[RMDB]
RNA sequence: GGGAACGACUCGAGUAGAGUCGAAAAGUGGCGUCGAAGUCGCUGCGUUGCCGACCACUGCAACGCGAAAUCCUUGAUGCCAGUGAGCGAUUCGACGGGCUAUUGACGUUCACGCUUACCGAGACGCACCCACUUUCGAUUUCGAUCGAAAGUGGGUAAAAGAAACAACAACAACAAC
Reactivity to 2A3 in 0.01 (KOAc 150mM, MgCl2 10mM, bicine 150mM(pH8.5), 24C), signal-to-noise 2, nucleotides 027 to 126: g050u020g030g060c010g010u040c010g040a090a010g110u070c010g050c110u060g020c000g000u000u000g010c030c000g050a080c010c030a080c080u040g000c010a000a000c000g000c010g010a060a070a000u040c010c010u030u090g050a070u100g100c060c050a040g080u040g070a060g030c020g060a040u080u070c040g020a020c070g060g050g020c030u050a070u220u090g050a030c030g010u030u060c110a040c020g070c060u090u090a040c000c050g040a040g040a050c040g000c040
Reactivity to DMS in 0.01 (KOAc 150mM, MgCl2 10mM, bicine 150mM(pH8.5), 24C), signal-to-noise 1, nucleotides 027 to 126: g020u000g010g000c020g010u020c000g020a070a040g000u000c040g000c090u020g000c020g020u000u000g000c000c100g000a270c140c140a060c030u000g020c010a000a000c000g030c010g020a060a080a040u000c030c070u010u000g030a130u010g000c040c060a060g000u010g000a040g000c000g010a110u000u000c010g000a010c010g000g010g010c060u000a170u000u010g030a050c100g000u000u000c080a090c050g020c070u000u000a150c030c050g030a100g020a050c060g020c130